[RMDB]
RNA sequence: GGGAACGACUCGAGUAGAGUCGAAAAUACAAUGUCACACUGAAGCCCUCGUGGAAUUUUAGAACUCAGCAGCUGGAAGGGACAGUAGAAAUCUGAUCCCAUCCACCUGCUCCACUGAACGGAGCAGUGAUAGCAACGUGUUCGCACGUUGCUAUCAAAAAGAAACAACAACAACAAC
Reactivity to DMS in 0.01 (KOAc 150mM, MgCl2 10mM, bicine 150mM(pH8.5), 24C), signal-to-noise 3, nucleotides 027 to 126: u050a180c230a070a040u050g040u020c040a070c120a100c060u010g020a080a090g010c020c000c050u000c070g030u030g010g020a070a080u020u040u040u040a090g020a060a170c140u030c080a100g000c020a020g000c140u000g010g000a000a080g000g000g010a030c000a000g030u040a040g040a070a080a080u010c000u000g000a080u000c000c000c020a070u000c020c010a040c100c000u000g010c000u000c020c010a060c090u020g010a110a130c170g000g010a120g000c000a010g000
Reactivity to 2A3 in 0.01 (KOAc 150mM, MgCl2 10mM, bicine 150mM(pH8.5), 24C), signal-to-noise 5, nucleotides 027 to 126: u180a010c060a010a100u170g080u130c050a030c000a010c070u050g040a070a020g010c000c000c000u020c000g040u020g060g050a080a080u030u060u120u260a170g020a080a040c040u050c150a050g000c010a020g000c010u040g000g020a030a010g010g000g010a000c000a010g070u110a090g210a060a100a040u050c000u020g030a290u010c010c000c000a010u000c000c000a020c000c000u000g000c000u000c000c000a060c090u130g060a060a000c090g010g000a020g030c010a000g020
This 177-nucleotide RNA was probed chemically with DMS and 2A3. The 2A3 profile rests on 4,699 reads. The RNA was probed in 150 mM KOAc, 10 mM MgCl2 and 150 mM bicine (pH 8.5) at 24 C.